The data come from the RNA Mapping Database (RMDB), library M2RFPK. An RNA of 207 nucleotides, treated with DMS and 2A3 and read out base by base.
RNA sequence: GGGAACGACUCGAGUAGAGUCGAAAAUUGAUAAUUUGUUGUGUAACUUCAUUUAAAUGAAUUGAAACAAAUUUAAUACAAGUGGAUGUAGGAUAACCGUCCGUCCUUUACAUUGGAAUAAAAGUGAACGACACAGACCUCUUCGGAGGUCUGUGAACUUGUCUAAUGUGUUCGCACAUUAGACAAGAAAAGAAACAACAACAACAAC
Reactivity to DMS in 0.01 (KOAc 150mM, MgCl2 10mM, bicine 150mM(pH8.5), 24C), signal-to-noise 1, nucleotides 027 to 156: u010u000g000a110u010a040a070u010u010u000g000u000u000g030u000g000u000a060a090c090u000u000c040a040u000u000u000a120a100a170u000g000a060a060u000u000g000a180a130a070c020a020a060a060u010u000u010a020a120u000a170c060a080a110g040u010g010g010a070u000g010u000a090g010g000a130u000a010a100c040c090g010u010c050c010g030u000c000c040u000u000u020a040c070a090u010u000g010g010a110a180u010a030a040a140a120g040u000g000a090a080c020g010a300c000a000c000a000g000a020c000c010u000c000u000u000c300g030g010a040g020g010u000c010u000g010u010g000a000a070
Reactivity to 2A3 in 0.01 (KOAc 150mM, MgCl2 10mM, bicine 150mM(pH8.5), 24C), signal-to-noise 2, nucleotides 027 to 156: u130u110g060a010u110a190a040u010u000u000g010u000u020g030u020g030u100a060a040c010u000u000c000a060u070u150u300a130a170a060u080g040a020a000u050u070g030a070a000a000c020a000a060a050u070u070u150a080a090u180a050c020a110a070g040u020g090g020a000u060g020u080a010g040g030a010u040a140a090c110c050g050u000c000c020g020u010c030c000u050u060u000a060c060a120u060u100g110g030a040a070u080a080a060a050a030g100u040g060a060a010c090g040a000c010a000c000a010g000a000c010c000u000c030u120u050c200g070g000a000g000g000u040c000u000g000u000g060a000a000
2A3 adducts were read by reverse transcription with SuperScript II with manganese. The DMS profile rests on 2,331 reads.